[RMDB]
Source: RMDB library TTRINS, as collected in RNAgym. Chemical mapping of a 177-nucleotide RNA with DMS. DMS adducts were read by reverse transcription with MarathonRT. The DMS profile rests on 1,785 reads.
RNA sequence: GGGAACGACUCGAGUAGAGUCGAAAAGAUAUGGAGAUGCAAACUAUGUUUCUGAGGCUAGAGCUCUGUUCGGAAACGAACAAGAGCUCUUGGACCCUCAGAGAACAUAGUUUGCAUCUCCUAAGUCCUAUUCAUUCCCCUUCGGGGGAAUGAAUAGAAAAGAAACAACAACAACAAC
Reactivity to DMS in 0.01 (KOAc 150mM, MgCl2 10mM, bicine 150mM(pH8.5), 24C), signal-to-noise 1, nucleotides 027 to 126: g000a120u010a300u000g020g000a010g000a010u010g010c000a020a010a020c000u010a000u000g000u000u000u000c000u000g010a000g010g020c040u010a010g010a010g030c000u010c000u000g000u020u000c000g010g000a160a090a300c000g020a020a000c010a020a050g020a020g000c000u000c000u000u010g020g000a120c300c010c020u000c000a020g010a050g000a000a010c000a010u000a000g020u010u000u010g000c010a000u000c000u010c000c010u010a010a070g000u000c060